An RNA of 207 nucleotides, treated with 2A3 and read out base by base. Values cover nucleotides 27 to 156. The 2A3 profile rests on 952 reads. The RNA was probed in 150 mM KOAc, 10 mM MgCl2 and 150 mM bicine (pH 8.5) at 24 C.
RNA sequence: GGGAACGACUCGAGUAGAGUCGAAAAGUUGGCUCCGUCAUCAACACAUUUCGGUUAAAUAUAACUGACAAAUCAAACAAUAAUUUCGCAGUAGCUGCGUAAUAGCCACUGCAUCGCCUAACAGCAUCUCCUACGUGCUGUUAACGCGAUUCAACCCCCAUGUGCUACGGUUCGCCGUAGCACAUGGAAAAGAAACAACAACAACAAC
Reactivity to 2A3 in 0.01 (KOAc 150mM, MgCl2 10mM, bicine 150mM(pH8.5), 24C), signal-to-noise 2, nucleotides 027 to 156: g060u070u060g000g000c000u040c040c070g110u040c020a060u080c060a090a160c030a030c060a170u040u090u080c070g010g090u090u080a060a140a100u250a080u050a070a090c040u020g090a000c060a010a070a050u160c050a020a100a090c020a020a160u090a130a090u070u110u130c050g000c010a000g020u120a070g060c050u020g030c000g040u080a010a060u090a070g000c000c000a020c000u020g010c050a000u000c000g000c000c000u000a000a000c000a000g020c000a010u070c110u150c090c060u080a050c050g010u000g000c000u000g000u000u000a020a020c030g000c020g010a020u050u000c030a070a070c000c010c000